[RMDB]
RNA sequence: GGGAACGACUCGAGUAGAGUCGAAAAGAUAUGGAUCUUCGUCGGUGUCGAGGAUCUCGGAAACGAGGGAGACACCGACGAGAGAUCCUAAGUCAAAUCAAUAAUGUUGUUCGCAACAUUAUUGAAAUCCUAGUUAAAUCUUCGGAUUUAACUAGGAAAAAGAAACAACAACAACAAC
Reactivity to 2A3 in 0.01 (KOAc 150mM, MgCl2 10mM, bicine 150mM(pH8.5), 24C), signal-to-noise 3, nucleotides 027 to 126: g030a010u070a040u170g010g000a000u000c000u000u020c010g000u000c000g000g000u010g000u000c010g020a250g060g030a010u000c000u000c000g010g040a050a050a030c010g000a000g020g000g000a030g000a000c000a000c000c000g020a000c000g000a000g000a000g000a000u000c000c000u010a120a010g040u030c040a030a020a190u020c010a000a000u010a000a000u000g010u010u000g030u040u100c300g000c170a000a000c000a000u010u010a000u000u000g010a060a010a010
Reactivity to DMS in 0.01 (KOAc 150mM, MgCl2 10mM, bicine 150mM(pH8.5), 24C), signal-to-noise 5, nucleotides 027 to 126: g000a040u010a300u010g000g000a010u000c000u000u000c000g000u000c000g010g020u000g010u000c000g000a080g020g000a020u000c000u000c000g000g000a130a090a220c010g010a030g000g000g000a030g010a020c000a000c000c010g000a000c000g010a010g000a010g000a000u000c000c000u000a020a060g010u000c040a110a110a200u000c000a000a000u000a010a000u000g010u000u000g000u000u020c240g020c010a010a010c000a000u000u000a000u000u000g000a000a080a110

Structure probing data (2A3 and DMS) for a 177-nucleotide construct. For DMS, 7,429 sequencing reads were counted. Values cover nucleotides 27 to 126.